[RMDB]
RNA sequence: GGGAACGACUCGAGUAGAGUCGAAAACCUGCACCACUUCCUCGAUGCCGGAGUGCUGGAAGUCCAUAGCUCCGCGGGAGCGUGGCAAGCCUCACCGAUGCGUUAUCGUAAUCAAGGAUUGUCCAUGGAAUGGUUGUCAAUUCGUUGACAACCAUUCAAAAGAAACAACAACAACAAC
Reactivity to DMS in 0.01 (KOAc 150mM, MgCl2 10mM, bicine 150mM(pH8.5), 24C), signal-to-noise 4, nucleotides 027 to 126: c020c020u000g030c080a100c070c050a070c090u000u000c000c010u010c040g000a080u010g000c080c030g000g000a040g000u010g030c040u020g010g020a120a070g020u020c020c010a050u020a120g010c010u000c010c010g030c260g010g020g020a020g010c030g000u000g000g000c000a160a050g020c030c020u000c100a070c110c070g000a030u010g000c070g000u010u010a070u020c050g020u010a050a060u020c070a090a080g000g000a070u000u000g000u000c030c060a080u020g000
Reactivity to 2A3 in 0.01 (KOAc 150mM, MgCl2 10mM, bicine 150mM(pH8.5), 24C), signal-to-noise 9, nucleotides 027 to 126: c000c000u010g030c030a050c020c000a040c020u040u030c000c010u040c030g060a060u090g050c040c020g050g020a080g020u110g010c020u020g020g050a100a030g060u050c000c010a040u070a100g000c010u030c010c030g160c110g160g060g010a010g000c010g010u010g000g000c020a030a010g020c000c000u020c010a050c020c030g040a040u070g020c030g060u110u130a110u170c040g020u060a050a090u080c050a050a020g040g010a050u020u070g030u000c030c040a050u080g050